An RNA of 177 nucleotides, treated with 2A3 and DMS and read out base by base. The data come from the RNA Mapping Database (RMDB), library OK1LIB. The RNA was probed in 150 mM KOAc, 10 mM MgCl2 and 150 mM bicine (pH 8.5) at 24 C. For 2A3 the reverse transcriptase was SuperScript II with manganese. In probing experiments dimethyl sulfate is read out at A N1 and C N3, which are open when not base-paired.

[RMDB]
RNA sequence: GGGAACGACUCGAGUAGAGUCGAAAAAUAAAGGCCAUCCUUAUCAGCUGUGUUAGUAGCAGGUGGCAAUUAAUUUAUCUGCUGUACUUGGUACUAGAGAUAUCCUACUAUCUCCACAGGAAGAUCAUGUACUCAGGACGUUCGCGUCCUGAGUACAAAAAGAAACAACAACAACAAC
Reactivity to 2A3 in 0.01 (KOAc 150mM, MgCl2 10mM, bicine 150mM(pH8.5), 24C), signal-to-noise 2, nucleotides 027 to 126: a000u200a040a000a000g020g090c040c000a080u090c060c000u090u050a070u110c260a000g070c000u070g020u000g000u260u100a060g000u070a020g040c070a000g000g000u000g140g000c030a000a000u010u010a000a060u090u110u110a050u000c020u040g030c030u020g130u020a000c040u020u070g150g000u190a150c100u100a060g000a000g000a020u000a020u120c040c000u030a120c000u020a060u010c000u040c000c000a000c000a130g130g000a080a030g000a130u220c140a070
Reactivity to DMS in 0.01 (KOAc 150mM, MgCl2 10mM, bicine 150mM(pH8.5), 24C), signal-to-noise 1, nucleotides 027 to 126: a140u040a040a100a140g030g000c000c000a020u000c000c080u010u030a040u000c190a230g000c000u030g040u020g000u010u000a060g060u110a000g070c000a090g000g040u000g010g000c010a050a080u000u000a010a100u010u000u000a050u000c050u000g040c040u000g000u020a010c000u000u010g030g000u040a000c000u000a060g000a000g000a050u020a070u000c030c000u040a060c080u000a010u000c010u010c000c000a120c110a010g010g040a060a060g000a090u010c080a170